Chemical mapping of a 177-nucleotide RNA with 2A3 and DMS.
The data come from the RNA Mapping Database (RMDB), library OK1LIB.

RNA sequence: GGGAACGACUCGAGUAGAGUCGAAAACUCUGUAUACUAUGCGAAAGAGUCGGAAGAAACAUAUAUACAAGGAAGAGGCGAAGCAUAGUAUAGAAAGAGAUUGUAUAUAUGUUUUAGAGAGAGAGAAGGGAAUAUCUUACUUCGGUAAGAUAUUCCCAAAAGAAACAACAACAACAAC
Reactivity to 2A3 in 0.01 (KOAc 150mM, MgCl2 10mM, bicine 150mM(pH8.5), 24C), signal-to-noise 4, nucleotides 027 to 126: c000u000c000u030g060u020a000u010a000c000u010a010u000g020c010g070a230a080a050g090a150g070u070c050g050g060a170a030g020a050a050a000c000a010u010a000u010a000u000a000c000a020a020g100g020a100a080g090a080g180g080c110g100a100a010g000c000a000u010a000g010u000a010u000a010g030a000a170a000g080a000g010a030u060u030g000u000a000u000a000u000a000u000g040u020u010u050u070a140g030a010g000a000g000a000g000a010g030a200a180
Reactivity to DMS in 0.01 (KOAc 150mM, MgCl2 10mM, bicine 150mM(pH8.5), 24C), signal-to-noise 2, nucleotides 027 to 126: c010u000c010u010g010u000a030u010a010c020u000a020u000g000c000g030a060a110a120g000a080g060u000c120g000g000a110a170g030a020a000a000c000a040u000a000u010a000u000a000c010a000a040g030g000a070a110g000a160g000g000c160g000a060a180g000c020a000u000a010g000u000a000u000a030g000a090a010a150g000a060g000a130u000u000g000u000a000u020a000u000a000u000g000u000u000u000u000a070g010a150g010a090g010a120g050a070g000a120a190